Chemical mapping of a 207-nucleotide RNA with 2A3. As a SHAPE reagent, 2A3 marks flexible, mostly unpaired nucleotides at the ribose 2'-OH. For 2A3 the reverse transcriptase was SuperScript II with manganese. The RNA was probed in 150 mM KOAc, 10 mM MgCl2 and 150 mM bicine (pH 8.5) at 24 C. The 2A3 profile rests on 541 reads. The data come from the RNA Mapping Database (RMDB), library OK3TST.
RNA sequence: GGGAACGACUCGAGUAGAGUCGAAAAUUGGCAAUAACUUUUCUGUAGAACAGUUUUCUGAGAUUUGACCCUUCUAUAUUUCAGGAUAUAGUUUUCAUCUUUGCUGUCAAAUAGCUGAAUGAAACCUCCAGGAUGACUUUCAUGAAUUUUUUAGGGACAUCGGAAAAUAGUUCGCUAUUUUCCGAUGAAAAGAAACAACAACAACAAC
Reactivity to 2A3 in 0.01 (KOAc 150mM, MgCl2 10mM, bicine 150mM(pH8.5), 24C), signal-to-noise 1, nucleotides 027 to 156: u150u110g060g020c020a010a100u020a130a090c010u100u130u140u050c060u080g120u100a080g030a080a050c010a020g000u000u020u090u180c070u030g050a090g000a140u000u040u100g030a090c010c000c000u000u080c060u020a030u030a010u100u050u040c050a020g010g020a010u010a050u010a070g030u010u020u020u020c000a010u000c020u020u140u090g020c050u080g040u120c030a190a000a000u080a130g010c000u000g060a110a010u010g000a040a090a000c050c000u020c050c000a010g020g070a050u030g020a030c060u080u130u060c050a070u060g170a190a170u110u160u080u040u160u190a010g000g010g020a010